[RMDB]
RNA sequence: GGGAACGACUCGAGUAGAGUCGAAAAGAUAUGGAGUAACAACAGGCACUGACUAUUGUACAGAAGUAUUCGGAAACGAAUACUUCUGUACAACGAAUCAGUGAACUACCUGUGUUACUCCUAAGUCGCGUCUAAUAUACUUCGGUAUAUUAGACGCAAAAGAAACAACAACAACAAC
Reactivity to DMS in 0.01 (KOAc 150mM, MgCl2 10mM, bicine 150mM(pH8.5), 24C), signal-to-noise 2, nucleotides 027 to 126: g000a060u010a300u000g030g010a030g000u000a000a020c000a130a060c000a000g000g000c010a040c000u010g000a030c080u000a300u010u000g000u000a000c000a020g000a000a030g010u010a000u000u000c000g010g020a200a130a190c010g030a000a000u000a000c000u000u000c000u010g000u000a000c010a000a000c130g000a090a100u000c000a010g000u000g010a080a050c100u000a300c010c010u010g010u000g010u010u000a000c000u020c000c000u000a000a040g030u010c080